[RMDB]
RNA sequence: GGGAACGACUCGAGUAGAGUCGAAAAACUCCUAUUCCAACACGUCCUCGUCGUACAGAGUGGUAACAUGUGUCACCACAUAUCCAAGCUUGGGUACACGGGCUUGACCCAACCCCUUCGGCGGAUGAAAACCAGAUUACGUUCGCGUAAUCUGGAAGAAUAUGAUAGCCUUCGGGCUAUCAUAUUCAAAAGAAACAACAACAACAAC
Reactivity to 2A3 in 0.01 (KOAc 150mM, MgCl2 10mM, bicine 150mM(pH8.5), 24C), signal-to-noise 5, nucleotides 027 to 156: a000c080u060c050c010u060a120u130u100c040c050a060a050c030a030c110g030u020c000c010u030c020g030u010c030g030u060a070c050a090g110a040g100u040g010g020u050a100a030c040a120u180g080u080g080u140c060a020c060c000a010c020a030u100a040u070c050c040a050a030g060c090u100u060g010g020g010u050a030c030a040c120g000g000g020c020u090u220g080a210c000c000c010a020a020c020c000c010c010u050u120c000g030g000c030g000g050a030u040g070a060a090a010a050c000c000a000g000a010u000u000a000c010g010u030u040c200g010c000g110u010a000a000u000c000u010g010g000a000a000
Reactivity to DMS in 0.01 (KOAc 150mM, MgCl2 10mM, bicine 150mM(pH8.5), 24C), signal-to-noise 2, nucleotides 027 to 156: a070c070u000c020c000u000a120u020u000c020c040a030a140c080a110c060g040u010c000c000u010c020g040u010c020g010u020a140c100a110g020a150g000u000g040g020u000a050a040c050a240u010g010u000g010u000c030a030c010c010a070c030a100u010a030u010c020c010a060a210g000c110u000u000g000g000g010u000a080c090a080c130g000g020g040c030u010u010g030a230c030c000c010a050a180c040c000c000c070u000u000c040g020g000c040g000g000a060u030g000a100a050a100a140c000c010a020g000a060u000u000a000c000g000u000u010c280g060c020g010u010a000a000u010c000u000g020g010a010a070